[RMDB]
RNA sequence: GGGAACGACUCGAGUAGAGUCGAAAAGAGCCAGACUUCGGUCUGGCUCAAAGUGGACGAGGAGCGCUGAACCCACACAAAACUAGACAGCGCAAAAUAAAAAAAGGUUCGACUUCGGUCGAACCAAUCUCACAUUUUAGUUCGCUAAAAUGUGAGAAAAAGAAACAACAACAACAAC
Reactivity to DMS in 0.01 (KOAc 150mM, MgCl2 10mM, bicine 150mM(pH8.5), 24C), signal-to-noise 1, nucleotides 027 to 126: g000a050g000c000c000a010g030a030c000u000u050c140g090g000u000c000u000g020g000c000u000c000a030a010a120g010u000g000g010a130c120g000a110g000g020a130g000c050g000c030u000g000a210a190c040c000c000a030c080a170c140a120a140a070a060c130u000a110g000a220c030a000g020c040g010c020a110a040a080a060u030a040a020a040a140a090a060a030g000g000u000u000c000g010a010c000u000u020c180g020g000u000c000g000a030a000c000c000a000a000

Chemical mapping of a 177-nucleotide RNA with DMS. The reactions ran in a buffer of 150 mM KOAc, 10 mM MgCl2 and 150 mM bicine (pH 8.5), at 24 C. Reactivities are given for positions 27 through 126. For DMS the reverse transcriptase was MarathonRT.